[RMDB]
This 177-nucleotide RNA was probed chemically with 2A3 and DMS. Conditions: 150 mM KOAc, 10 mM MgCl2 and 150 mM bicine (pH 8.5), 24 C. It was measured as part of the RMDB library OK1LIB. For DMS the reverse transcriptase was MarathonRT. 2A3 adducts were read by reverse transcription with SuperScript II with manganese. Reactivities are given for positions 27 through 126.
RNA sequence: GGGAACGACUCGAGUAGAGUCGAAAAGCACGUCCGGUAAGCCCCGUGCGAACACUUGAGCUCCGGCUUGCCCGCUCUUGUGGAUUAGGACGUUCUAGCUCCGGCUUGGCCGCUAGUUCGUCCGAAACAGCACGUCCUAGUUCGCUAGGACGUGCUGAAAAGAAACAACAACAACAAC
Reactivity to 2A3 in 0.01 (KOAc 150mM, MgCl2 10mM, bicine 150mM(pH8.5), 24C), signal-to-noise 2, nucleotides 027 to 126: g000c000a010c060g000u010c020c020g010g090u070a030a010g000c000c000c000c000g000u020g080c070g060a130a020c040a000c000u040u060g030a010g070c060u070c040c000g000g000c020u070u050g000c020c000c000g060c010u000c000u040u060g080u040g000g060a040u040u150a050g000g010a000c000g000u000u000c000u010a000g020c000u040c140c000g110g000c070u080u300g130g000c040c040g000c020u000a000g000u000u040c020g000u000c000c000g000a010a010a010
Reactivity to DMS in 0.01 (KOAc 150mM, MgCl2 10mM, bicine 150mM(pH8.5), 24C), signal-to-noise 1, nucleotides 027 to 126: g020c030a040c100g000u020c020c100g100g000u000a080a160g000c060c010c070c030g020u020g110c010g010a020a090c030a010c000u070u020g000a140g030c010u010c180c300g000g000c060u000u000g010c000c090c110g010c010u000c010u150u000g000u000g000g020a130u050u000a060g010g000a000c000g040u000u000c000u010a000g080c050u000c170c020g000g000c100u000u030g050g000c140c050g000c000u000a000g000u000u000c050g020u000c010c010g000a010a080a170